[RMDB]
RNA sequence: GGGAACGACUCGAGUAGAGUCGAAAAGGAAAGACAAGACCUGGACCUGCAAGUAUCAUGUGAAUCGGGCAAGUCUGUCAAUUGCUGAUUAUCUGCAGAGAAGCGAGACUACAUGAAACACUGUUUGAAAUAAGCGGCAAUCGUCAUACUUUUACCAAAGGACGUUUCAAUUCGUUGAAACGUCCUUAAAAGAAACAACAACAACAAC
Reactivity to 2A3 in 0.01 (KOAc 150mM, MgCl2 10mM, bicine 150mM(pH8.5), 24C), signal-to-noise 1, nucleotides 027 to 156: g050g010a170a010a020g010a080c080a100a090g000a010c010c020u010g030g080a070c000c050u040g040c010a030a130g030u070a060u110c010a050u180g060u010g170a110a040u080c030g000g000g000c010a000a080g010u100c020u060g000u020c000a020a070u090u020g000c010u000g030a010u000u050a050u030c030u050g000c060a000g010a050g010a120a000g060c020g070a010g010a000c000u040a050c040a090u060g010a000a010a010c030a000c060u020g060u140u220u100g080a090a090a050u060a020a000g000c000g030g010c010a010a000u070c030g020u010c000a020u010a060c020u070u000u020u100a060c000c000a000